[RMDB]
RNA sequence: GGGAACGACUCGAGUAGAGUCGAAAAGAUAUGGACUGUAGAACUACAUGUAAAGAGCGUUGAAACGUUGUUAAAUCGGAAACGAUUUAACAACGUGGAGCUCUAUACAUGCUACAGUCCUAAGUCGGAUAAUGGUGUACUUCGGUACACCAUUAUCAAAAGAAACAACAACAACAAC
Reactivity to DMS in 0.01 (KOAc 150mM, MgCl2 10mM, bicine 150mM(pH8.5), 24C), signal-to-noise 5, nucleotides 027 to 126: g010a040u010a300u010g000g010a020c000u010g000u000a010g000a120a040c100u020a300c000a000u000g000u010a010a140a030g030a010g020c000g000u000u020g000a190a140a020c000g010u000u000g010u000u010a000a000a010u010c000g010g010a110a100a220c010g020a010u000u010u000a000a010c000a000a000c000g010u000g000g000a100g010c000u000c000u000a030u000a000c010a000u000g000c000u000a000c000a000g000u010c000c000u000a010a060g000u000c060g000
Reactivity to 2A3 in 0.01 (KOAc 150mM, MgCl2 10mM, bicine 150mM(pH8.5), 24C), signal-to-noise 3, nucleotides 027 to 126: g040a020u070a040u150g000g000a010c000u010g000u020a010g020a090a050c110u240a050c300a010u010g000u010a080a140a010g010a000g000c020g070u150u020g040a120a170a010c000g000u000u000g000u000u010a000a000a010u000c010g000g030a080a060a050c010g000a010u000u000u000a000a000c000a000a000c000g000u000g000g000a000g000c000u000c000u000a000u000a000c000a000u000g000c000u000a010c000a000g000u010c000c000u000a000a000g010u000c030g040

This 177-nucleotide RNA was probed chemically with DMS and 2A3.
For DMS, 7,906 sequencing reads were counted.
The RNA was probed in 150 mM KOAc, 10 mM MgCl2 and 150 mM bicine (pH 8.5) at 24 C.